[RMDB]
RNA sequence: GGGAACGACUCGAGUAGAGUCGAAAAUAGCUACGUUCGGAAGGGAUAACCGCUGAAAGCAUCUAAGCGGGAAGCCUGUUCCAAGAUGAGGUUUCUCACCCCCUCGAGGGGGUAAGGCCCCCGGCAGGAGAUUAACAGACUUCGGUCUGUUAAUCUCAAAAGAAACAACAACAACAAC
Reactivity to DMS in 0.01 (KOAc 150mM, MgCl2 10mM, bicine 150mM(pH8.5), 24C), signal-to-noise 1, nucleotides 027 to 126: u000a090g070c000u000a140c130g020u020u000c190g000g020a020a300g000g000g000a000u000a220a300c000c010g000c000u000g030a110a130a130g030c150a020u000c070u000a130a060g000c010g000g000g000a040a170g000c000c000u010g020u030u010c000c020a030a140g000a100u000g000a090g000g000u000u000u010c020u030c000a210c000c000c010c010c000u000c120g010a060g000g010g000g000g010u030a000a030g000g000c040c000c000c010c030g000g030c220a130g000
An RNA of 177 nucleotides, treated with DMS and read out base by base. For DMS, 519 sequencing reads were counted. For DMS the reverse transcriptase was MarathonRT. Values cover nucleotides 27 to 126. It was measured as part of the RMDB library RFMREP.